[RMDB]
RNA sequence: GGGAACGACUCGAGUAGAGUCGAAAAAUCUAUCCGCUGCUCCUGCCACAAUCCUGAUUGUCUACACACUCUAAUGAAGACCCUGUGUGGUCUCAAAGAUAAUUGCCCCAUCUGAUUAAACUGUGAUUCAAUAAAGAUUACCUGAAAUCUGACAGCAAAUUAAUGGACCAUUCGUGGUCCAUUAAUUAAAAGAAACAACAACAACAAC
Reactivity to DMS in 0.01 (KOAc 150mM, MgCl2 10mM, bicine 150mM(pH8.5), 24C), signal-to-noise 2, nucleotides 027 to 156: a060u000c030u020a120u000c020c050g000c050u000g010c000u000c020c010u000g000c020c020a070c060a070a090u000c040c020u000g000a090u010u000g000u000c010u000a120c040a090c010a070c040u000c030u010a060a150u020g010a090a100g000a010c030c030c010u020g030u010g030u000g020g020u010c020u000c030a050a080a090g000a070u000a050a100u000u010g030c030c000c040c020a110u010c040u010g020a200u000u000a060a060a070c030u000g010u000g010a130u010u010c100a060a120u010a060a110a050g010a090u000u000a070c070c050u000g010a070a050a040u000c020u000g020a090c020a100g010c020a050
Reactivity to 2A3 in 0.01 (KOAc 150mM, MgCl2 10mM, bicine 150mM(pH8.5), 24C), signal-to-noise 3, nucleotides 027 to 156: a000u040c030u030a060u030c000c020g020c040u050g000c020u020c000c000u000g080c020c000a040c040a060a070u010c000c020u030g020a060u060u050g020u000c040u080a020c020a000c010a030c060u050c030u080a120a120u090g050a140a090g010a010c000c010c030u080g090u060g040u130g190g020u000c000u010c010a020a040a000g040a000u060a040a110u100u080g080c010c000c000c020a020u040c030u080g070a100u040u150a140a120a050c040u010g020u020g020a030u080u090c040a050a030u030a210a110a040g060a060u030u050a070c000c040u060g050a040a040a060u060c040u070g040a030c010a010g150c040a010
Source information: The record gives the reactivity of an RNA of 207 nucleotides to DMS and 2A3. For DMS the reverse transcriptase was MarathonRT. For DMS, 5,164 sequencing reads were counted. The reactions ran in a buffer of 150 mM KOAc, 10 mM MgCl2 and 150 mM bicine (pH 8.5), at 24 C. It was measured as part of the RMDB library OK3TST.